Conditions: 150 mM KOAc, 10 mM MgCl2 and 150 mM bicine (pH 8.5), 24 C. The record gives the reactivity of an RNA of 177 nucleotides to 2A3 and DMS. The 2A3 profile rests on 4,803 reads. The data come from the RNA Mapping Database (RMDB), library OK1LIB. The DMS profile rests on 5,788 reads. Values cover nucleotides 27 to 126. For DMS the reverse transcriptase was MarathonRT.
RNA sequence: GGGAACGACUCGAGUAGAGUCGAAAAAUGCCAACAGCCUGGUAGUGGACGCCCUUAUCCAGCAUCGCCAACGGCGCGACGAUAUCAUCGUGAUGCUGACCGCACGCCGAGUCAGUCCUCCAGUCGCCGUAAUGAGGCUGUUCGCAGCCUCAUUACGAAAAGAAACAACAACAACAAC
Reactivity to 2A3 in 0.01 (KOAc 150mM, MgCl2 10mM, bicine 150mM(pH8.5), 24C), signal-to-noise 5, nucleotides 027 to 126: a000u080g030c010c000a050a020c040a050g070c020c030u060g020g050u120a110g040u050g050g020a030c020g050c010c000c000u070u100a070u040c050c000a010g040c020a030u070c050g010c020c020a070a030c040g060g000c040g040c040g030a020c010g020a040u030a050u240c110a030u080c040g040u040g030a050u080g010c010u000g020a050c000c010g010c040a080c040g050c060c000g040a010g000u020c010a010g020u030c000c010u020c000c010a030g050u060c030g010c050
Reactivity to DMS in 0.01 (KOAc 150mM, MgCl2 10mM, bicine 150mM(pH8.5), 24C), signal-to-noise 3, nucleotides 027 to 126: a080u020g010c010c030a050a100c100a060g010c030c030u000g030g040u000a050g020u020g000g000a140c100g000c030c000c040u010u010a130u040c120c030a050g000c050a030u000c020g000c060c070a100a110c120g000g030c030g010c050g010a060c020g000a050u020a050u050c160a100u020c040g020u000g010a060u020g000c010u010g000a060c050c020g000c100a060c100g000c060c010g000a060g000u000c030a070g000u020c040c010u000c050c030a100g010u020c020g010c060